[RMDB]
RNA sequence: GGGAACGACUCGAGUAGAGUCGAAAAGAUCUCUUGUGGUUGAUGACGAGGAGACGUCCAUCCUUCUGUAUGACAUAUGGGAACAGGAUAACAGCCAGUGGCUGCAGGAUCAGUGCAUGCGUAUGGGCCGUAAGAGGGGUUUCGACCCCUCUUACGGAAAAGAAACAACAACAACAAC
Reactivity to 2A3 in 0.01 (KOAc 150mM, MgCl2 10mM, bicine 150mM(pH8.5), 24C), signal-to-noise 2, nucleotides 027 to 126: g000a030u000c040u000c010u040u080g080u000g060g190u050u030g110a050u190g000a000c000g020a010g120g010a000g000a020c030g140u000c010c000a000u050c000c010u030u040c000u010g110u080a090u070g130a030c020a100u230a090u190g070g080g000a120a040c010a080g000g120a000u100a250a000c000a030g040c000c010a040g000u050g080g010c000u000g000c000a000g090g000a080u050c040a000g000u010g000c010a020u090g000c010g080u120a010u090g000g010g000
Reactivity to DMS in 0.01 (KOAc 150mM, MgCl2 10mM, bicine 150mM(pH8.5), 24C), signal-to-noise 1, nucleotides 027 to 126: g000a040u000c000u000c000u000u030g010u000g000g000u010u000g000a060u030g000a040c080g000a070g000g000a060g000a090c080g000u010c030c100a100u000c020c040u020u000c060u010g070u000a060u080g000a120c150a240u000a070u010g020g000g020a140a040c080a080g010g000a060u000a100a080c030a020g010c020c040a080g000u040g010g000c020u000g050c090a060g000g030a050u040c030a020g000u030g010c030a010u000g000c050g030u010a050u000g020g020g010

The data come from the RNA Mapping Database (RMDB), library OK1LIB. Structure probing data (2A3 and DMS) for a 177-nucleotide construct. The RNA was probed in 150 mM KOAc, 10 mM MgCl2 and 150 mM bicine (pH 8.5) at 24 C. Values cover nucleotides 27 to 126. For 2A3 the reverse transcriptase was SuperScript II with manganese. DMS adducts were read by reverse transcription with MarathonRT. The DMS profile rests on 1,700 reads. Reactivities are rounded to 0.1 and cut off at 0 and 3.